[RMDB]
RNA sequence: GGGAACGACUCGAGUAGAGUCGAAAACAGUUUGCGCAGUCCCGCGUGCGCGGCGGGAAGCUGUUCUGCGCCGGCGCGUGCCAGGUGCAGCAGCGCGUCGCUGGCCUGUUCUGGCUUGAGAUUGCCUAUUGCUCGGAUCGCACCGGCGCUGAGGCCGGCUUCACAAUAACUUCGGUUAUUGUGAAGCAAAAGAAACAACAACAACAAC
Reactivity to DMS in 0.01 (KOAc 150mM, MgCl2 10mM, bicine 150mM(pH8.5), 24C), signal-to-noise 1, nucleotides 027 to 156: c060a120g010u000u010u000g020c010g040c010a110g010u000c010c000c020g020c050g020u020g020c100g030c050g000g000c000g000g020g030a050a050g030c000u010g010u010u000c050u010g000c000g050c010c000g010g020c010g000c060g040u000g000c070c000a070g050g010u000g040c040a070g040c040a050g030c040g030c060g000u010c060g000c020u010g010g000c030c000u000g010u000u000c190u010g030g000c030u010u000g000a080g000a100u000u010g020c030c030u000a080u000u000g000c020u000c030g000g000a130u010c030g020c020a050c030c020g000g000c010g020c000u000g000a040g020g010c020c010g010
Reactivity to 2A3 in 0.01 (KOAc 150mM, MgCl2 10mM, bicine 150mM(pH8.5), 24C), signal-to-noise 5, nucleotides 027 to 156: c040a020g040u120u160u170g060c080g000c030a040g070u030c000c010c000g010c040g040u160g050c180g000c050g070g010c000g000g000g020a030a010g040c010u030g010u090u040c020u040g000c010g000c000c000g000g010c010g000c010g020u090g060c050c020a150g010g110u180g050c000a010g010c000a010g000c030g000c040g090u120c070g000c020u030g020g010c000c000u090g080u180u100c080u100g000g000c000u070u090g020a020g000a050u190u300g050c020c020u100a090u070u140g010c020u010c020g020g050a110u070c010g020c010a010c010c000g000g000c040g000c000u010g010a030g010g020c030c040g060
Background: This 207-nucleotide RNA was probed chemically with DMS and 2A3. For 2A3 the reverse transcriptase was SuperScript II with manganese. For DMS, 5,537 sequencing reads were counted. Source: RMDB library OK3TST, as collected in RNAgym.